[RMDB]
RNA sequence: GGGAACGACUCGAGUAGAGUCGAAAAGCUCUGAGAGACAGAUCGAACAACAAAGAGAGAUCGAAAAUCUUAGAGGAGAGAACGAAUCUGUCGACUUCACUAGGACAUUGUCGAUCAGAGGUCCAAAGACCAUUCAAUCCUUCGGGGUUGGAUGGUCAAAAGAAACAACAACAACAAC
Reactivity to 2A3 in 0.01 (KOAc 150mM, MgCl2 10mM, bicine 150mM(pH8.5), 24C), signal-to-noise 9, nucleotides 027 to 126: g020c000u000c000u000g010a000g000a000g000a000c010a030g010a010u010c020g060a080a060c050a060a040c040a050a300a010g140a010g010a000g000a010u000c010g040a060a070a010a020u000c000u000u010a020g000a040g030g000a010g000a000g010a050a030c040g020a060a140u160c140u180g180u050c030g070a260c000u010u010c010a010c040u020a000g030g010a010c030a100u070u170g000u010c000g000a010u020c000a000g000a000g010g030u000c000c000a050a030a000
Reactivity to DMS in 0.01 (KOAc 150mM, MgCl2 10mM, bicine 150mM(pH8.5), 24C), signal-to-noise 5, nucleotides 027 to 126: g020c010u000c000u000g010a030g010a300g020a000c040a090g000a020u000c000g000a300a280c070a070a130c300a060a080a080g000a050g010a300g010a000u000c010g000a050a090a110a200u000c010u000u000a010g000a050g010g010a010g000a110g000a120a020c030g000a100a120u020c090u040g020u000c010g000a300c010u000u000c010a140c010u010a020g000g010a010c130a070u020u010g010u000c000g000a170u010c000a010g000a020g000g000u020c010c020a080a090a080
The record gives the reactivity of an RNA of 177 nucleotides to 2A3 and DMS. DMS adducts were read by reverse transcription with MarathonRT. Reactivities are given for positions 27 through 126. For 2A3, 16,096 sequencing reads were counted. The data come from the RNA Mapping Database (RMDB), library OK1LIB.